Chemical mapping of a 177-nucleotide RNA with 2A3 and DMS. The RNA was probed in 150 mM KOAc, 10 mM MgCl2 and 150 mM bicine (pH 8.5) at 24 C. 2A3 adducts were read by reverse transcription with SuperScript II with manganese. DMS adducts were read by reverse transcription with MarathonRT. For DMS, 5,626 sequencing reads were counted.
RNA sequence: GGGAACGACUCGAGUAGAGUCGAAAAUUCCCCUAUUUCGAUAGGGGAACACCUGCGGGCGGCUCGCAGUUCGGACUUCCUCCUCCUCUGAGUCAAAGGGCGAUAGGCCUCGGUUCGCCGAGGCCAAGUACUCUAUUAGUUUCGACUAAUAGAGUACAAAAGAAACAACAACAACAAC
Reactivity to 2A3 in 0.01 (KOAc 150mM, MgCl2 10mM, bicine 150mM(pH8.5), 24C), signal-to-noise 2, nucleotides 027 to 126: u030u000c000c000c000c000u010a030u050u120u090c150g080a000u010a000g000g000g000g000a000a010c020a040c010c000u020g050c040g050g020g030c040g030g000c020u010c010g000c010a020g020u060u080c060g050g050a040c030u060u040c000c010u010c000c010u000c000c020u010c030u070g040a030g010u020c030a090a080a050g050g010g020c040g030a030u090a130g000g010c000c000u000c000g010g000u030u040c140g020c030c030g000a000g020g020c000c000a000a000
Reactivity to DMS in 0.01 (KOAc 150mM, MgCl2 10mM, bicine 150mM(pH8.5), 24C), signal-to-noise 4, nucleotides 027 to 126: u000u000c000c000c000c000u000a000u000u000u010c100g000a030u000a010g000g000g000g010a010a020c120a080c070c020u000g020c060g030g010g010c060g010g000c030u000c020g020c060a050g010u010u000c050g010g010a100c090u000u010c030c010u010c020c020u000c030c020u000c040u000g010a120g010u010c060a070a090a080g000g010g010c060g010a130u000a100g010g030c010c010u000c000g010g000u000u000c180g010c010c000g000a010g000g020c000c010a000a050